An RNA of 207 nucleotides, treated with DMS and 2A3 and read out base by base. Conditions: 150 mM KOAc, 10 mM MgCl2 and 150 mM bicine (pH 8.5), 24 C. High DMS reactivity at an A or C suggests that its Watson-Crick edge is free.

RNA sequence: GGGAACGACUCGAGUAGAGUCGAAAAGGCCUUUCGAGGCCGGUCACUCCUAAGUCGGUCCGGGAGUGACGCACAUAGACAACAGCUCGGAAACGAGACAUGUCUAUAGGCGUCACGUUGAUCGGACCGAUAUGGAUAUUCACGCGUUCGCGCGUAAAGCUAAUCUUUCUUUCGAGAAAGAUUAGCUAAAAGAAACAACAACAACAAC
Reactivity to DMS in 0.01 (KOAc 150mM, MgCl2 10mM, bicine 150mM(pH8.5), 24C), signal-to-noise 1, nucleotides 027 to 156: g010g000c000c000u010u000u030c230g030a040g000g000c020c000g000g000u000c080a070c130u120c000c000u020a080a290g000u000c000g070g030u000c000c030g000g000g030a030g000u000g020a030c010g060c010a020c030a010u010a010g000a020c000a050a080c160a190g000c020u000c010g030g030a160a120a270c020g020a020g010a000c110a300u000g020u010c000u000a020u010a120g050g020c000g000u000c000a000c000g000u000u010g020a070u000c030g020g010a020c000c010g000a000u000a030u010g000g000a120u010a070u000u000c080a080c000g020c000g020u000u020c230g020c020g080c000g000u000a030a150
Reactivity to 2A3 in 0.01 (KOAc 150mM, MgCl2 10mM, bicine 150mM(pH8.5), 24C), signal-to-noise 3, nucleotides 027 to 156: g000g000c020c000u080u050u180c300g150a040g000g010c010c020g000g000u130c040a070c080u000c010c000u060a160a070g010u000c000g000g000u000c000c000g000g000g000a040g000u010g000a000c000g000c000a110c010a010u010a000g010a010c010a070a010c060a110g020c000u010c020g070g000a110a110a040c010g010a010g060a000c040a080u020g010u000c010u000a010u010a020g040g000c000g000u000c000a000c000g010u090u010g000a020u020c000g000g000a000c010c000g000a000u000a010u010g000g000a000u060a150u240u230c120a010c020g040c000g020u070u110c200g000c010g000c020g180u080a140a110